The data come from the RNA Mapping Database (RMDB), library OK1LIB. Structure probing data (2A3) for a 177-nucleotide construct. 2A3 adducts were read by reverse transcription with SuperScript II with manganese.

RNA sequence: GGGAACGACUCGAGUAGAGUCGAAAAAGUGCGAGUGAGCUGAAGUGGCUAUGUUUCGCUCGUCGAUGGUAGUGCGGUCCUUUACGCAGGAAUCUUUUUAUCGCAUGAGCAAGUACAUCAAGAGCCGGGUCGGAGUGAAGUUCGCUUCACUCCGACCAAAAGAAACAACAACAACAAC
Reactivity to 2A3 in 0.01 (KOAc 150mM, MgCl2 10mM, bicine 150mM(pH8.5), 24C), signal-to-noise 1, nucleotides 027 to 126: a000g070u000g010c000g010a010g030u060g000a010g000c080u140g000a120a000g080u000g090g000c000u040a080u000g020u000u290u070c090g000c000u000c050g160u010c060g010a080u100g050g090u050a090g030u010g020c010g060g000u060c000c000u000u060u060a040c090g000c040a000g010g010a080a060u030c000u070u090u120u100u140a060u000c070g000c000a000u000g050a040g110c020a130a130g010u130a110c130a000u090c100a220a080g010a000g070c040c000g040
Record summary:
Reactivities are given for positions 27 through 126.